[RMDB]
RNA sequence: GGGAACGACUCGAGUAGAGUCGAAAAUGUGUGCUCGAGAGCCUCCCUGUCCGACAGAGCUUUUAGAUCUUCUGAUCUUUCCCUGGAGGAUAUCGCUUAAGCUUCAAGCGAUUCUCGGAAUAAUUAAACUGGGAGUUAUAUUCGUAUAACUCCCAGUAAAAGAAACAACAACAACAAC
Reactivity to 2A3 in 0.01 (KOAc 150mM, MgCl2 10mM, bicine 150mM(pH8.5), 24C), signal-to-noise 2, nucleotides 027 to 126: u180g090u030g030u030g020c000u010c020g100a090g000a010g000c010c010u010c000c000c000u030g070u030c020c010g010a020c030a010g120a030g070c000u000u090u040u050a000g010a010u040c030u300u010c100u300g020a010u000c000u010u020u030c000c030c000u020g030g000a010g040g000a050u070a000u010c030g060c000u050u100a160a120g020c030u210u100c100a010a000g000c000g010a040u030u040c000u000c000g070g080a080a040u200a140a070u220u100a100a230
Reactivity to DMS in 0.01 (KOAc 150mM, MgCl2 10mM, bicine 150mM(pH8.5), 24C), signal-to-noise 3, nucleotides 027 to 126: u020g010u000g010u010g000c010u000c030g010a110g010a160g010c040c030u000c010c010c060u000g010u000c010c020g000a120c090a100g010a070g000c270u010u000u000u000a020g000a010u000c010u000u000c300u020g000a020u000c010u000u000u000c010c000c000u010g000g000a120g010g010a050u010a030u000c000g010c010u000u000a070a150g010c190u000u010c130a010a020g010c000g010a020u000u000c020u000c000g000g010a120a070u010a070a130u000u000a040a110
Conditions: 150 mM KOAc, 10 mM MgCl2 and 150 mM bicine (pH 8.5), 24 C.
The record gives the reactivity of an RNA of 177 nucleotides to 2A3 and DMS.
For DMS the reverse transcriptase was MarathonRT.
For 2A3, 1,471 sequencing reads were counted.